[RMDB]
The record gives the reactivity of an RNA of 177 nucleotides to DMS and 2A3. In probing experiments dimethyl sulfate is read out at A N1 and C N3, which are open when not base-paired.
RNA sequence: GGGAACGACUCGAGUAGAGUCGAAAAGCCGCCAGCCCAACGACGGGUCGAUCAAUUGCAGUUCCAGUAGCCGAGUACCGACCAGGUGGGCCCGGGCGCAGAGCAGCUCCCCCGCCUGCACGCCGGCCAUCACUACCUGGUUCGCCAGGUAGUGAUGAAAAGAAACAACAACAACAAC
Reactivity to DMS in 0.01 (KOAc 150mM, MgCl2 10mM, bicine 150mM(pH8.5), 24C), signal-to-noise 5, nucleotides 027 to 126: g000c030c010g020c040c040a110g000c020c030c020a110a090c170g010a180c090g020g010g020u000c040g000a060u010c090a120a160u050u000g010c030a120g000u010u000c030c050a160g040u020a120g000c020c050g000a110g020u040a100c070c030g000a130c140c020a050g000g030u000g010g000g000c050c080c230g000g000g010c020g020c040a100g000a150g010c060a090g020c040u010c010c140c010c020c040g000c010c000u000g020c030a070c090g010c010c010g000g000c100
Reactivity to 2A3 in 0.01 (KOAc 150mM, MgCl2 10mM, bicine 150mM(pH8.5), 24C), signal-to-noise 8, nucleotides 027 to 126: g040c010c020g000c020c020a040g020c010c000c010a070a050c040g090a020c040g010g010g050u040c030g030a060u080c040a100a140u120u120g060c040a040g040u070u040c020c010a030g030u070a020g040c020c020g030a040g030u040a090c020c050g030a050c030c020a020g030g000u030g010g010g000c030c070c030g030g000g000c020g000c020a030g030a030g060c040a030g000c000u030c000c020c000c000c000g010c000c000u020g010c030a010c030g030c010c000g000g000c000
The data come from the RNA Mapping Database (RMDB), library OK1LIB.
The 2A3 profile rests on 12,596 reads.